[RMDB]
RNA sequence: GGGAACGACUCGAGUAGAGUCGAAAAUCUCUUUCCUCGUCUUCCUCGGUCAACCUCCGGAGUUCCUCUUCCUCCUCCUUGCUGAGGGACUUUCCUCCCGCGCUCAGUUGUUUCUUCUUGUUCUCGAACGUAUCACAUAGUUCGCUAUGUGAUACGUAAAAGAAACAACAACAACAAC
Reactivity to DMS in 0.01 (KOAc 150mM, MgCl2 10mM, bicine 150mM(pH8.5), 24C), signal-to-noise 1, nucleotides 027 to 126: u010c040u000c020u010u010u010c020c010u000c050g030u000c040u000u000c050c030u000c060g030g020u000c080a090a160c070c010u010c020c020g010g010a120g020u000u020c020c010u000c030u000u010c020c030u000c040c010u000c020c020u000u000g000c060u010g000a120g010g000g000a080c040u010u000u000c040c040u000c020c000c020g030c110g010c050u000c080a090g020u000u000g020u000u000u000c040u010u000c120u010u010g000u000u000c010u000c040g010a260
About this RNA
The record gives the reactivity of an RNA of 177 nucleotides to DMS. Values are in units of 0.01, from 0 to 300, in steps of 10. The reactions ran in a buffer of 150 mM KOAc, 10 mM MgCl2 and 150 mM bicine (pH 8.5), at 24 C.